[RMDB]
RNA sequence: GGGAACGACUCGAGUAGAGUCGAAAAGCAGUAUACUGCCACUUGUGUGAGAAUACUUUUAGUACAAGCGAGUACACGCAGUAUAGUGCCACUUGUGUGAGAAUACUUUUAGUACAAGCGAGUACACGAGCAGUGGUGUGUUCGCACACCACUGCUCAAAAGAAACAACAACAACAAC
Reactivity to 2A3 in 0.01 (KOAc 150mM, MgCl2 10mM, bicine 150mM(pH8.5), 24C), signal-to-noise 2, nucleotides 027 to 126: g000c010a000g110u000a000u010a050c000u000g000c020c010a050c030u040u000g050u110g040u120g220a110g060a160a060u160a030c000u100u130u050u300a000g000u000a000c010a150a000g000c000g040a000g010u090a020c070a000c040g000c020a000g000u010a000u050a040g200u030g050c000c000a010c010u040u020g030u000g020u020g090a010g040a030a080u030a120c000u120u000u070u170a030g000u000a000c000a000a050g130c000g060a070g000u000a000c030a020c050
Annotation: An RNA of 177 nucleotides, treated with 2A3 and read out base by base. Conditions: 150 mM KOAc, 10 mM MgCl2 and 150 mM bicine (pH 8.5), 24 C.